[RMDB]
RNA sequence: GGGAACGACUCGAGUAGAGUCGAAAAGAGGAUCCCCCAAGCUUCCAACAGGCAAGCAACAAGAUAGAGGAGCCCCCAUGACGCUGGAACCGUCCCGGAAGUGGGAGAAAGGGAGGCGAAGAUAGAAUAACUGUCCCGUUCGCGGGACAGAAAAGAAACAACAACAACAAC
Reactivity to 2A3 in 0.01 (KOAc 150mM, MgCl2 10mM, bicine 150mM(pH8.5), 24C), signal-to-noise 2, nucleotides 027 to 129: g080a030g000g010a050u050c020c000c000c000c000a040a000g060c000u040u000c010c130a170a160c060a080g000g040c080a000a030g100c000a000a020c050a080a000g030a030u130a010g050a040g010g000a010g000c020c010c060c000c000a030u000g010a010c030g030c030u100g000g030a110a020c000c000g080u000c000c000c000g050g020a040a010g080u030g070g000g020a000g010a050a040a000g000g010g000a000g020g000c010g060a000a040g000a000u180a000g080a090a010u180a090a050
Reactivity to DMS in 0.01 (KOAc 150mM, MgCl2 10mM, bicine 150mM(pH8.5), 24C), signal-to-noise 3, nucleotides 027 to 129: g020a150g040g000a090u040c050c000c030c050c130a140a090g000c010u000u000c040c040a100a150c180a040g010g070c100a040a000g020c050a080a200c000a080a050g020a100u030a100g050a000g040g040a080g020c070c040c000c000c000a170u060g010a040c150g010c000u010g000g060a000a060c170c080g010u000c050c000c030g040g030a020a060g040u020g070g030g000a020g030a010a110a050g010g010g010a060g010g020c040g020a040a000g010a020u060a030g030a110a100u050a050a150